RNA sequence: GGGAACGACUCGAGUAGAGUCGAAAACACAUACAAUUACAAGCGCAUCUUGAUAUGUUUUAUCAUCAAUGUUAUCCAACUCUCCAAUAAAACUUAAUGAUGAUUCCGCUUCACCCACUGCAAAUACGCAGACUAUAGAUUUCGAUCUAUAGUCUGCAAAAGAAACAACAACAACAAC
Reactivity to 2A3 in 0.01 (KOAc 150mM, MgCl2 10mM, bicine 150mM(pH8.5), 24C), signal-to-noise 3, nucleotides 027 to 126: c030a000c010a020u170a080c050a060a150u230u070a070c050a100a040g030c020g000c040a030u020c030u040u060g030a030u040a030u160g040u020u110u040u050a050u050c040a010u040c000a060a130u100g000u070u060a070u070c030c010a040a080c040u040c020u000c090c030a090a060u080a160a080a060a070c050u110u110a070a010u150g040a040u050g000a050u080u050c020c010g050c010u020u040c050a120c020c010c030a070c060u070g010c050a000a130a060u060a140c170
Reactivity to DMS in 0.01 (KOAc 150mM, MgCl2 10mM, bicine 150mM(pH8.5), 24C), signal-to-noise 2, nucleotides 027 to 126: c080a070c080a060u010a080c130a090a080u020u000a080c110a070a090g020c090g060c070a040u010c040u000u010g000a120u000a020u000g000u020u000u010u000a050u000c050a070u010c050a080a040u000g030u010u000a060u000c080c090a070a050c060u010c030u000c040c080a060a080u010a050a020a070a030c060u020u010a100a100u000g000a070u010g010a060u000u000c140c020g000c050u000u020c080a090c050c010c040a040c070u000g020c110a040a050a120u020a110c210
Annotation:
The data come from the RNA Mapping Database (RMDB), library OK2TRN. This 177-nucleotide RNA was probed chemically with 2A3 and DMS. DMS adducts were read by reverse transcription with MarathonRT.